The data come from the RNA Mapping Database (RMDB), library OK2TST. The record gives the reactivity of an RNA of 177 nucleotides to DMS and 2A3. For 2A3 the reverse transcriptase was SuperScript II with manganese. The RNA was probed in 150 mM KOAc, 10 mM MgCl2 and 150 mM bicine (pH 8.5) at 24 C. The DMS profile rests on 5,049 reads. DMS adducts were read by reverse transcription with MarathonRT.
RNA sequence: GGGAACGACUCGAGUAGAGUCGAAAAGAGGCGGUAGCCGAAGGCAGCCUGCAGCUCGCCGAGGAAGGCCGCGUCAUCGAGGCCACGCAGGCGUUCGGCGUCCUUGCCUGGGCGGGUCCAGAUCAGACUACCCUACUGAGUUCGCUCAGUAGGGUAGAAAAGAAACAACAACAACAAC
Reactivity to DMS in 0.01 (KOAc 150mM, MgCl2 10mM, bicine 150mM(pH8.5), 24C), signal-to-noise 4, nucleotides 027 to 126: g010a080g000g030c020g000g040u000a130g030c010c030g010a070a070g020g030c030a200g010c030c010u000g010c070a220g000c020u000c030g030c040c040g010a040g000g000a090a060g000g000c030c040g010c020g000u000c200a100u000c060g000a050g010g000c000c040a130c250g010c190a100g000g010c010g000u010u010c010g000g000c010g010u000c030c000u000u000g000c010c030u000g000g000g020c040g000g010g000u000c070c050a130g000a100u010c110a130g000a280
Reactivity to 2A3 in 0.01 (KOAc 150mM, MgCl2 10mM, bicine 150mM(pH8.5), 24C), signal-to-noise 2, nucleotides 027 to 126: g110a020g030g000c050g060g160u180a040g040c020c030g050a040a050g070g020c030a010g020c010c000u040g020c010a020g000c010u040c050g060c040c040g030a030g010g000a060a040g020g000c000c000g010c000g040u090c010a100u180c010g020a030g020g030c020c000a050c130g190c130a080g020g010c010g020u060u030c010g020g000c000g000u050c010c000u050u120g140c010c000u040g040g000g010c010g000g000g020u020c000c020a050g040a180u140c040a010g050a080